[RMDB]
RNA sequence: GGGAACGACUCGAGUAGAGUCGAAAAGAAGAAAGACAAAGCUUCGAUAGACCUGUUGAGAAGUCAAGGUAAGAUAGUUUCAGCAUUACCUGGGAAGCUAAUGGAAUACGUAGAUAGCCCUCAUGAAUCCCCGUAAUUACUUCGGUAAUUACGGGGAAAAAGAAACAACAACAACAAC
Reactivity to DMS in 0.01 (KOAc 150mM, MgCl2 10mM, bicine 150mM(pH8.5), 24C), signal-to-noise 2, nucleotides 027 to 126: g020a020a020g030a090a060a070g010a120c140a110a110a170g000c030u000u010c000g020a140u000a100g010a180c040c020u000g000u000u010g020a110g020a140a160g000u000c020a100a000g000g020u000a020a060g020a100u000a070g010u010u010u000c050a070g010c120a110u010u000a030c060c020u010g030g010g020a090a070g010c070u020a030a040u030g020g020a080a080u000a100c140g000u000a070g000a120u010a110g010c030c020c010u000c070a060u010g040a140a160
An RNA of 177 nucleotides, treated with DMS and read out base by base.
The reactions ran in a buffer of 150 mM KOAc, 10 mM MgCl2 and 150 mM bicine (pH 8.5), at 24 C.
The DMS profile rests on 1,010 reads.